[RMDB]
RNA sequence: GGGAACGACUCGAGUAGAGUCGAAAACUGUUCUUUUCAGUGUGACAACUGAAACUCGGAGUUCGCUCCGAUUGUUGUCAAACUUAUUUUUGAUGGUUCGCAGAGCUUGGUUAGUUGCUUGCAACGCAGGAAUCAUUAUUUUCGAAUAAUGAUUCCUAAAAGAAACAACAACAACAAC
Reactivity to 2A3 in 0.01 (KOAc 150mM, MgCl2 10mM, bicine 150mM(pH8.5), 24C), signal-to-noise 9, nucleotides 027 to 126: c040u050g060u120u060c030u080u120u060u070c060a020g000u020g010u020g060a010c010a020a000c000u180g070a200a080a050c060u010c000g000g010a000g020u080u070c140g070c110u000c000c000g000a010u020u080g010u000u000g000u000c000a010a010a010c020u070u070a080u100u150u040u070u130g100a080u100g030g030u050u040c030g000c060a030g010a030g100c040u070u120g050g010u080u060a090g020u040u070g030c070u030u030g010c050a030a020c060g000c080
Reactivity to DMS in 0.01 (KOAc 150mM, MgCl2 10mM, bicine 150mM(pH8.5), 24C), signal-to-noise 9, nucleotides 027 to 126: c050u010g010u010u000c060u010u010u010u010c090a020g010u000g010u000g010a070c050a060a020c000u000g010a080a070a110c300u000c000g000g010a020g010u000u040c200g020c010u000c000c000g000a020u000u010g010u000u000g000u000c020a050a050a060c070u000u010a080u010u010u000u010u010g010a090u000g000g000u000u010c090g020c030a050g000a110g010c040u000u010g010g000u010u010a090g010u000u010g010c040u000u000g010c050a020a060c110g010c190
The record gives the reactivity of an RNA of 177 nucleotides to 2A3 and DMS. It was measured as part of the RMDB libraries RFM100 and RFMREP. For 2A3 the reverse transcriptase was SuperScript II with manganese.